[RMDB]
RNA sequence: GGGAACGACUCGAGUAGAGUCGAAAAGGGGUCUCCUGCAAGUCUCGUGAGUGUUUCUUGGAUUUACUGAAGCCUCCACGGUUGUCAGAAACAUCCACGAGUCACCAGGAGACGGAGGCACCCAAAACUAUCUAAACACUUCGGUGUUUAGAUAGAAGAUGAGUUACUACUUCGGUAGUAACUCAUCAAAAGAAACAACAACAACAAC
Reactivity to 2A3 in 0.01 (KOAc 150mM, MgCl2 10mM, bicine 150mM(pH8.5), 24C), signal-to-noise 5, nucleotides 027 to 156: g100g000g010g000u010c010u010c000c010u030g040c070a240a290g020u010c010u000c000g040u010g030a130g010u020g030u010u040u020c050u090u230g170g030a110u250u260u200a140c040u070g060a110a030g030c030c020u130c160c110a040c050g020g010u050u020g050u040c000a000g010a010a020a000c010a010u030c010c000a000c000g000a000g000u000c000a050c020c000a010g030g020a010g010a000c010g000g000a000g000g010c040a170c010c010c020a020a050a000a040c000u000a000u000c000u000a000a000a000c000a000c020u030u100c300g130g000u000g000u000u000u000a000g000a000u000a000g000a010a010
Reactivity to DMS in 0.01 (KOAc 150mM, MgCl2 10mM, bicine 150mM(pH8.5), 24C), signal-to-noise 1, nucleotides 027 to 156: g000g010g000g050u000c000u000c000c000u030g000c020a120a210g000u000c000u000c000g030u000g000a070g040u000g000u010u000u000c000u000u010g040g010a100u000u000u010a100c020u000g010a000a120g010c050c000u000c040c110a270c070g000g030u000u000g010u000c020a020g000a070a030a050c080a000u000c010c000a010c010g000a040g020u000c010a110c160c000a000g000g010a080g030a030c010g010g000a080g040g020c050a150c000c000c000a080a090a130a210c000u000a000u000c000u000a000a050a000c000a020c000u010u010c300g050g040u010g020u000u000u020a000g000a030u000a000g010a070a200